[RMDB]
RNA sequence: GGGAACGACUCGAGUAGAGUCGAAAAGGCGUUAUCGCCGUUACGCCAGCCCAGGCUGGACGGAAUAAUGUACUGCUGGUGAUCCAUCACUACGGUGAUAGUAGUGUCGUCAUCGUGCGAACUGACCCCUUUAGUUCGAAUUCGUUCGAACUAAAGGAAAAGAAACAACAACAACAAC
Reactivity to 2A3 in 0.01 (KOAc 150mM, MgCl2 10mM, bicine 150mM(pH8.5), 24C), signal-to-noise 8, nucleotides 027 to 126: g030g000c010g040u060u040a050u090c110g010c040c000g000u020u030a080c060g000c010c000a030g020c040c010c020a050g100g000c020u040g020g020a020c010g000g020a020a020u040a020a030u030g040u070a110c040u080g030c010u010g010g010u010g010a020u030c040c030a070u090c020a000c010u020a000c030g100g090u180g120a090u090a120g020u010a000g010u010g020u040c040g000u000c010a030u020c040g140u080g030c010g010a040a030c030u060g080a060c010c010
Reactivity to DMS in 0.01 (KOAc 150mM, MgCl2 10mM, bicine 150mM(pH8.5), 24C), signal-to-noise 9, nucleotides 027 to 126: g000g010c010g020u000u000a030u000c170g010c000c000g010u000u000a070c230g010c000c000a080g020c070c070c100a170g010g010c000u000g000g000a030c010g010g010a160a020u000a030a020u000g010u000a100c070u000g020c020u000g000g010u000g000a020u010c100c090a100u010c010a010c010u000a010c020g010g020u010g010a130u010a200g010u000a010g010u000g010u000c230g000u000c010a010u000c030g000u010g010c020g000a100a110c120u000g010a180c110c050